RNA sequence: GGGAACGACUCGAGUAGAGUCGAAAACUGUCGUUCUUCGGAACGACAGAAAGAACGCGUGGGUCACGCAAGGAGGAGCGUGUGGGACGCGUCAAACCCAAAAAAGCGUUCGGUUCGCCGAACGCAAUCUGGUGUAACACUUCGGUGUUACACCAGAAAAAGAAACAACAACAACAAC
Reactivity to DMS in 0.01 (KOAc 150mM, MgCl2 10mM, bicine 150mM(pH8.5), 24C), signal-to-noise 1, nucleotides 027 to 126: c000u000g010u000c000g000u000u000c000u000u000c200g000g020a010a010c000g000a020c000a000g000a010a040a090g020a140a010c010g010c000g020u000g000g010g020u000c020a000c000g020c010a070a110g000g000a300g000g000a070g000c030g000u010g020u000g050g020g040a070c000g020c000g020u010c020a040a060a100c000c000c000a010a060a050a090a060a120g010c020g040u000u020c000g000g000u000u000c150g060c000c010g000a010a010c000g010c000a010a020
Reactivity to 2A3 in 0.01 (KOAc 150mM, MgCl2 10mM, bicine 150mM(pH8.5), 24C), signal-to-noise 2, nucleotides 027 to 126: c000u000g000u000c010g000u000u020c010u040u040c170g070g000a000a000c000g000a000c010a000g000a000a000a000g040a060a020c010g020c010g000u020g010g240g100u070c000a000c000g000c050a050a080g120g060a070g080g030a140g020c010g000u010g000u050g010g160g050a010c020g020c000g000u000c010a040a100a150c030c010c000a050a060a000a030a000a030g000c000g000u010u010c000g000g050u020u050c230g050c090c000g000a000a000c000g010c000a000a030